The record gives the reactivity of an RNA of 177 nucleotides to DMS. For DMS, 1,177 sequencing reads were counted. High DMS reactivity at an A or C suggests that its Watson-Crick edge is free. Values cover nucleotides 27 to 126. Conditions: 150 mM KOAc, 10 mM MgCl2 and 150 mM bicine (pH 8.5), 24 C. It was measured as part of the RMDB library TTRINS.
RNA sequence: GGGAACGACUCGAGUAGAGUCGAAAAGAUAUGGACGGUUAUGGUCCCUGUAGACAUGAUCCUGGGUUCGGAAACGAACCCUGCGUAGGAUAGAUCAACAGCUAUGGGACCAUAACCGUCCUAAGUCGAAUGCUUACCUGUUCGCAGGUAAGCAUUCAAAAGAAACAACAACAACAAC
Reactivity to DMS in 0.01 (KOAc 150mM, MgCl2 10mM, bicine 150mM(pH8.5), 24C), signal-to-noise 1, nucleotides 027 to 126: g020a020u000a260u000g000g020a000c000g000g010u000u000a020u000g010g010u000c000c020c010u020g060u000a010g000a110c130a220u010g010a010u000c020c060u000g000g030g070u000u030c000g000g020a200a140a240c030g010a000a010c000c000c000u000g010c300g020u030a100g010g000a040u000a060g000a050u000c030a050a080c220a060g000c130u010a060u000g010g010g020a040c000c000a010u000a000a000c000c000g000u000c000c020u010a000a040g010u010c130